[RMDB]
RNA sequence: GGGAACGACUCGAGUAGAGUCGAAAAGAUAUGGAACCGCUAUGGGAGAAACCGGUCGGAAACGACCGAGUUUCAUCGAUCAUAACGGUUCCUAAGUCAAACGUCCAAUGGUUCGCCAUUGGACGAACAAGUGUUAUAGCUUCGGCUAUAACACUUGAAAAGAAACAACAACAACAAC
Reactivity to DMS in 0.01 (KOAc 150mM, MgCl2 10mM, bicine 150mM(pH8.5), 24C), signal-to-noise 3, nucleotides 027 to 126: g000a020u000a080u010g000g000a010a010c000c000g010c020u000a010u000g010g010g000a250g000a000a010a000c010c000g010g000u000c000g030g000a010a010a040c000g010a010c010c000g010a050g010u000u000u000c000a180u010c300g000a120u010c000a000u010a010a010c000g000g010u010u000c000c010u000a000a040g000u010c000a090a140a230c020g010u000c000c000a010a010u000g000g010u010u010c280g030c000c000a010u000u000g000g000a000c000g000a030a080
Reactivity to 2A3 in 0.01 (KOAc 150mM, MgCl2 10mM, bicine 150mM(pH8.5), 24C), signal-to-noise 3, nucleotides 027 to 126: g000a000u000a000u070g000g000a000a000c010c000g000c020u000a010u000g060g100g080a300g050a050a000a000c010c010g010g000u010c010g010g000a000a010a010c000g000a000c000c000g020a030g000u000u010u010c010a040u140c080g160a220u060c000a000u000a000a000c000g000g000u020u010c000c000u000a000a010g000u000c020a060a090a160c030g000u000c010c000a000a000u030g020g040u080u130c300g040c160c000a000u000u010g000g000a000c000g000a020a010